[RMDB]
RNA sequence: GGGAACGACUCGAGUAGAGUCGAAAAAUAAAUAGCGUAAUGGACAUUCGGAGUGUACGCUAAGUGUGUGUUGUAUACCUAACGUCCAAUUGAACACACACACAGUUGGACCUAAUGUCCAAAAAAAGUUACUUACACAGUUCGCUGUGUAAGUAACAAAAGAAACAACAACAACAAC
Reactivity to DMS in 0.01 (KOAc 150mM, MgCl2 10mM, bicine 150mM(pH8.5), 24C), signal-to-noise 3, nucleotides 027 to 126: a050u000a040a100a130u000a010g010c010g010u010a040a080u010g020g000a020c000a040u000u000c150g050g020a130g010u000g020u010a010c010g010c020u000a040a110g010u010g000u000g000u000g010u000u000g030u010a070u010a090c030c020u000a070a210c100g010u000c010c010a010a050u000u000g000a070a020c030a020c020a010c010a020c010a040c090a080g010u000u000g000g010a020c010c070u010a070a030u000g000u000c000c000a000a000a050a050a040a040a100
Reactivity to 2A3 in 0.01 (KOAc 150mM, MgCl2 10mM, bicine 150mM(pH8.5), 24C), signal-to-noise 4, nucleotides 027 to 126: a000u170a000a030a050u090a010g010c020g010u040a100a040u120g010g000a010c010a010u030u060c110g090g050a090g070u140g020u070a010c020g010c040u030a120a100g010u000g000u010g000u010g030u040u080g110u060a110u060a100c020c030u050a110a050c040g070u010c010c000a010a020u050u060g050a030a000c010a000c000a000c000a000c000a000c000a040g090u080u060g020g020a000c000c000u010a030a020u050g000u010c060c060a090a020a000a010a000a000a000